[RMDB]
RNA sequence: GGGAACGACUCGAGUAGAGUCGAAAAGCACGCCUGUAGUCCCAGCUACUCGGGAGGCUGAGACAGGAGGAUCGCUUGAGUCCAGGAGUUCUGGGCUGUAGUGCGCUAUGCCGAUCGGGUGUCCGCACUAAGUUCGGCAUCAAUAUGGUGACCUCCCCGGCAAUACUUUGUUCGCAAAGUAUUGCCGAAAAGAAACAACAACAACAAC
Reactivity to 2A3 in 0.01 (KOAc 150mM, MgCl2 10mM, bicine 150mM(pH8.5), 24C), signal-to-noise 1, nucleotides 027 to 156: g070c040a000c030g060c000c010u070g110u220a000g060u130c010c000c020a030g000c060u020a050c030u050c060g020g000g070a110g020g000c030u030g000a010g000a100c040a020g120g030a080g000g010a250u120c030g020c060u060u100g070a010g000u000c010c020a010g030g100a100g050u200u070c000u060g000g040g000c050u030g030u030a060g010u100g000c010g000c090u040a010u040g000c000c000g030a180u070c030g060g050g000u040g020u010c040c030g050c000a010c010u120a090a060g010u030u010c040g000g000c030a030u010c010a020a070u060a040u190g110g000u040g030a020c010c000u010c000c000c000
The record gives the reactivity of an RNA of 207 nucleotides to 2A3. Values cover nucleotides 27 to 156. 2A3 adducts were read by reverse transcription with SuperScript II with manganese. The RNA was probed in 150 mM KOAc, 10 mM MgCl2 and 150 mM bicine (pH 8.5) at 24 C.